[RMDB]
RNA sequence: GGGAACGACUCGAGUAGAGUCGAAAAGUGCAUCCAACCGCCAUUGUGGAAGAGGGCGCGUCAAUUGGCGCGAACGCACACAUUGGUCCUUUUUGUAUCGUUGGACCCCAUGUCGAAAUUGGUGAGGAUACAUGAUCUCGUUCGCGAGAUCAUGUAUAAAAGAAACAACAACAACAAC
Reactivity to DMS in 0.01 (KOAc 150mM, MgCl2 10mM, bicine 150mM(pH8.5), 24C), signal-to-noise 4, nucleotides 027 to 126: g020u000g020c130a140u010c020c000a040a050c030c120g000c000c010a020u000u000g020u000g010g000a090a140g010a110g000g000g030c010g010c010g020u000c010a270a200u000u030g010g010c010g000c000g010a020a030c030g010c120a170c010a000c020a030u000u000g010g010u010c040c010u010u010u000u010u010g010u000a080u000c110g010u000u010g000g010a060c050c030c010c030a070u000g000u000c100g020a040a070a140u000u000g010g010u000g000a120g010g000
Reactivity to 2A3 in 0.01 (KOAc 150mM, MgCl2 10mM, bicine 150mM(pH8.5), 24C), signal-to-noise 4, nucleotides 027 to 126: g070u060g020c050a080u000c010c000a020a040c030c020g000c010c000a020u030u030g020u020g030g060a210a080g080a170g070g080g000c020g000c000g000u000c000a300a300u240u300g020g000c000g030c000g030a030a000c010g030c050a030c000a000c000a190u010u020g010g020u050c000c000u220u240u060u120u180g240u130a200u120c090g000u020u060g030g000a030c020c000c030c010a030u120g070u090c100g090a130a070a080u090u100g080g000u080g070a080g070g060